[RMDB]
RNA sequence: GGGAACGACUCGAGUAGAGUCGAAAAGUCCGGGACGAAAGUCAGGACAAGGCAAUGUGGACGCCGACGAAUCAAAAGCCACCGGAAAUAUCCGCCUUCGUGGCAGGCACAUCCGCAAGAAAAGACAGCUAUGAUCUUGGUUCGCCAAGAUCAUAGCAAAAGAAACAACAACAACAAC
Reactivity to 2A3 in 0.01 (KOAc 150mM, MgCl2 10mM, bicine 150mM(pH8.5), 24C), signal-to-noise 4, nucleotides 027 to 126: g010u000c010c000g110g300g010a000c000g060a150a040a000g010u000c000a010g000g000a020c030a010a020g040g000c040a080a120u090g020u010g020g010a050c020g000c040c000g040a040c060g040a020a080u240c050a150a020a000a100g020c030c010a020c010c040g030g080a070a090a070u250a140u050c010c000g010c000c050u070u090c120g020u070g060g000c050a040g030g040c060a030c000a070u070c020c000g010c030a060a050g120a060a050a000a000g170a040c050a010
Reactivity to DMS in 0.01 (KOAc 150mM, MgCl2 10mM, bicine 150mM(pH8.5), 24C), signal-to-noise 2, nucleotides 027 to 126: g000u020c000c020g050g050g020a000c000g040a150a070a180g000u000c020a220g010g010a000c040a120a010g010g000c090a090a080u030g000u000g000g000a040c190g000c000c000g010a140c100g000a130a110u000c110a050a010a130a150g010c040c010a040c110c020g030g000a040a110a100u020a070u010c040c050g000c080c020u000u050c140g010u010g000g000c010a080g000g000c150a070c020a190u000c000c020g070c060a060a070g020a090a180a000a060g000a110c170a070